RNA sequence: GGGAACGACUCGAGUAGAGUCGAAAAGUGAACGAUCUCGGUUGUUUUUCUGAAGGCAUGAUCACCCCGUCCGAUGCGGAAGUUCGUGCUUCCGUCGAACGCGAAAGUCGGACGGCGGCCAUGAGUCAAUAUGUUUAAGGCUUCGGCCUUAAACAAAACUUCAUUGGGGAUUCGUCCCCAAUGAAGUAAAAGAAACAACAACAACAAC
Reactivity to 2A3 in 0.01 (KOAc 150mM, MgCl2 10mM, bicine 150mM(pH8.5), 24C), signal-to-noise 1, nucleotides 027 to 156: g100u100g050a120a100c050g050a090u080c050u070c180g050g000u000u000g030u000u050u000u000u070c000u060g070a060a030g110g000c040a030u000g000a020u100c020a010c010c020c020c000g000u020c000c000g000a010u040g000c000g040g030a020a000g010u120u300c170g090u300g030c000u010u000c000c010g000u000c000g020a150a040c060g010c050g150a100a050a010g070u000c000g000g000a000c000g000g000c000g010g010c020c020a020u010g040a010g040u060c010a000a100u050a060u270g010u020u010u000a040a000g010g010c000u020u050c210g100g030c000c000u000u000a000a000a000c000a000a000a000
The data come from the RNA Mapping Database (RMDB), library M2RFPK. Chemical mapping of a 207-nucleotide RNA with 2A3. For 2A3, 681 sequencing reads were counted. Conditions: 150 mM KOAc, 10 mM MgCl2 and 150 mM bicine (pH 8.5), 24 C. 2A3 adducts were read by reverse transcription with SuperScript II with manganese.